[RMDB]
RNA sequence: GGGAACGACUCGAGUAGAGUCGAAAAUAGGAGGCAAUGAUGCUUAUGAGGUGAUUGCGAUGUUUGAACCUCUGGUAACAUCUGUCAUUCUUCAGAAACAUCCUGAUAUCAUAGGCAAAUCAGGAGACGGCAUUUCAAGUUUCGACUUGAAAUGCCGAAAAGAAACAACAACAACAAC
Reactivity to DMS in 0.01 (KOAc 150mM, MgCl2 10mM, bicine 150mM(pH8.5), 24C), signal-to-noise 1, nucleotides 027 to 126: u020a070g040g020a040g010g000c030a030a100u000g000a020u000g030c040u000u000a100u000g000a020g000g000u000g000a260u020u000g000c020g020a160u000g020u010u000u000g000a160a050c020c000u000c010u020g040g020u000a020a050c010a020u000c040u000g000u000c070a050u010u010c040u010u000c200a070g010a090a080a060c100a080u020c000c000u000g010a010u000a050u000c070a200u020a080g010g020c110a040a130a070u000c020a020g000g000a050g000a180
Reactivity to 2A3 in 0.01 (KOAc 150mM, MgCl2 10mM, bicine 150mM(pH8.5), 24C), signal-to-noise 1, nucleotides 027 to 126: u150a020g020g060a010g020g000c020a010a060u050g050a020u020g000c050u200u210a060u160g000a000g000g000u080g040a100u030u120g050c130g120a150u250g180u100u090u060g070a020a010c000c010u000c040u040g030g020u010a040a010c000a000u000c010u100g000u000c020a170u020u030c040u070u090c010a080g160a030a110a010c040a070u000c010c000u000g000a020u000a040u080c130a040u070a110g190g000c040a180a080a000u000c000a000g000g020a000g020a010